[RMDB]
Structure probing data (DMS and 2A3) for a 177-nucleotide construct. Source: RMDB library TTRDES, as collected in RNAgym.
RNA sequence: GGGAACGACUCGAGUAGAGUCGAAAAGAUAUGGAUAAGUCCUGAACUACAGCGACGACUCGGAAACGAGUCCAAGCUGCAGGAGCUUAUCCUAAGUCAAACCCCACGAUGUUCGCAUCGUGGGGAAGCUUAUAUCCAGCUUCGGCUGGAUAUAAGCAAAAGAAACAACAACAACAAC
Reactivity to DMS in 0.01 (KOAc 150mM, MgCl2 10mM, bicine 150mM(pH8.5), 24C), signal-to-noise 2, nucleotides 027 to 126: g000a040u010a300u000g000g000a000u000a020a010g010u000c000c000u000g000a110a060c190u040a300c010a010g000c050g010a300c300g000a030c000u000c050g000g000a070a100a300c000g020a010g040u000c000c000a060a300g000c000u000g030c000a010g000g000a020g000c000u020u000a020u000c000c000u010a030a060g010u000c060a080a060a190c000c000c000c000a010c020g030a000u010g010u010u000c230g040c050a000u000c000g000u000g000g010g030g000a000a000
Reactivity to 2A3 in 0.01 (KOAc 150mM, MgCl2 10mM, bicine 150mM(pH8.5), 24C), signal-to-noise 1, nucleotides 027 to 126: g000a010u040a000u100g000g000a000u010a000a000g020u000c020c010u000g000a120a160c150u290a110c250a040g000c000g040a050c010g000a010c040u020c030g060g030a050a070a050c020g030a000g000u000c000c030a010a010g040c000u000g050c020a000g010g000a080g060c050u000u000a000u020c010c000u010a070a030g050u020c010a080a030a290c040c010c010c000a000c000g010a000u000g040u120u090c250g000c230a010u000c010g020u000g040g040g010g000a010a010
2A3 adducts were read by reverse transcription with SuperScript II with manganese.
For 2A3, 2,063 sequencing reads were counted.